[RMDB]
RNA sequence: GGGAACGACUCGAGUAGAGUCGAAAAGACCAAUCGUUCGCGAUUGGUCAAAAGGUGGAUGCUACGCUACCGAAGUAGCAAAAGUGCAGGUACAAAGCACAAAAACUUGGUUGUUCGCAACCAAGAAGAGUAAUAAGCAGUUCGCUGCUUAUUACUCAAAAGAAACAACAACAACAAC
Reactivity to 2A3 in 0.01 (KOAc 150mM, MgCl2 10mM, bicine 150mM(pH8.5), 24C), signal-to-noise 5, nucleotides 027 to 126: g000a000c000c000a010a000u000c000g030u040u050c240g000c010g140a010u010u010g000g000u000c000a010a020a000a010g080g010u070g030g080a110u070g000c010u010a000c020g010c030u040a060c010c050g090a100a010g020u020a000g000c000a000a010a050a070g010u010g010c000a000g080g050u080a100c060a120a170a030g010c020a010c000a030a060a010a020a010c000u010u000g010g010u000u000g020u030u040c220g000c070a000a000c000c010a000a000g010a020a010
Reactivity to DMS in 0.01 (KOAc 150mM, MgCl2 10mM, bicine 150mM(pH8.5), 24C), signal-to-noise 5, nucleotides 027 to 126: g000a010c000c000a000a010u000c010g020u010u020c240g040c010g010a010u010u000g000g010u000c000a010a020a080a120g020g040u010g030g010a160u000g010c020u000a020c050g010c070u000a210c050c020g030a070a120g020u010a010g010c010a030a070a060a090g010u000g000c010a070g010g010u010a140c220a080a090a100g000c000a010c030a090a060a060a090a150c020u000u000g000g010u000u000g010u000u010c200g010c000a010a000c000c000a010a010g010a080a070